[RMDB]
RNA sequence: GGGAACGACUCGAGUAGAGUCGAAAAAAGAUAUGGAUCCGAACUACAAGGACGAAACCAGCUAUGAAGUUCGCUCGGAAACGAGCGAAUGGAGCUGACUGACGGUACUUGCGGAUCCUAAGUCAAAGUAUCUCGUGAAGUUCGCUUCACGAGAUACAAAAGAAACAACAACAACAAC
Reactivity to DMS in 0.01 (KOAc 150mM, MgCl2 10mM, bicine 150mM(pH8.5), 24C), signal-to-noise 2, nucleotides 027 to 126: a060a060g000a030u010a300u010g020g000a020u000c020c020g000a110a100c050u030a300c030a050a000g000g000a300c000g000a100a080a090c190c000a000g000c020u020a300u020g070a160a230g000u000u000c000g000c000u040c000g000g000a170a090a190c000g000a020g000c010g000a040a000u000g050g020a010g020c010u000g000a060c120u000g000a300c030g000g000u000a260c010u000u000g040c030g020g020a000u010c000c000u010a010a110g020u010c020a070a110a130
Reactivity to 2A3 in 0.01 (KOAc 150mM, MgCl2 10mM, bicine 150mM(pH8.5), 24C), signal-to-noise 2, nucleotides 027 to 126: a000a000g060a030u070a070u160g000g000a020u000c010c000g040a110a060c120u290a080c290a000a000g040g020a030c040g060a080a010a010c060c000a010g030c000u110a300u300g030a010a010g010u030u000c000g020c000u000c000g020g060a100a110a040c000g010a030g000c010g000a000a000u000g000g030a010g000c000u000g070a070c050u070g090a020c050g020g130u300a020c000u010u030g000c000g030g000a000u000c030c000u020a060a050g000u020c010a130a060a000
Chemical mapping of a 177-nucleotide RNA with DMS and 2A3. It was measured as part of the RMDB library TTRDES. The 2A3 profile rests on 2,222 reads. In probing experiments dimethyl sulfate is read out at A N1 and C N3, which are open when not base-paired. Reactivities are rounded to 0.1 and cut off at 0 and 3. The RNA was probed in 150 mM KOAc, 10 mM MgCl2 and 150 mM bicine (pH 8.5) at 24 C.